[RMDB]
RNA sequence: GGGAACGACUCGAGUAGAGUCGAAAAGGGUGUUAUUCGUAACACCCAAAAAGAUAUGGAGCCAGACAGCUUUUGACGCGAAGUGGGUCGGAAACGACCCACAUUCGCGAUAAGCUGUGUGGCUCCUAAGUCAAAAACAACGUGUUCGCACGUUGAACACUUUCAUGCGAUUCGUCGCAUGAAAGUGAAAAGAAACAACAACAACAAC
Reactivity to 2A3 in 0.01 (KOAc 150mM, MgCl2 10mM, bicine 150mM(pH8.5), 24C), signal-to-noise 1, nucleotides 027 to 156: g040g000g000u010g000u000u030a050u020u170c180g020u060a000a010c010a010c000c000c040a000a000a000a040a000g030a030u030a030u070g000g000a000g000c000c000a010g010a210c000a000g030c000u000u070u060u230g170a070c020g010c000g010a000a000g000u000g000g000g000u010c010g030g010a060a030a000c010g010a000c000c000c000a000c010a080u000u000c000g000c000g000a000u000a040a000g000c000u020g000u000g000u000g000g000c000u000c000c000u000a000a000g000u010c000a000a000a000a040a070c020a000a000c000g010u020g080u090u080c210g000c070a000c000g000u060u070g040a020a010
Notes: An RNA of 207 nucleotides, treated with 2A3 and read out base by base. Source: RMDB library RNAMAK, as collected in RNAgym. Conditions: 150 mM KOAc, 10 mM MgCl2 and 150 mM bicine (pH 8.5), 24 C. For 2A3, 981 sequencing reads were counted.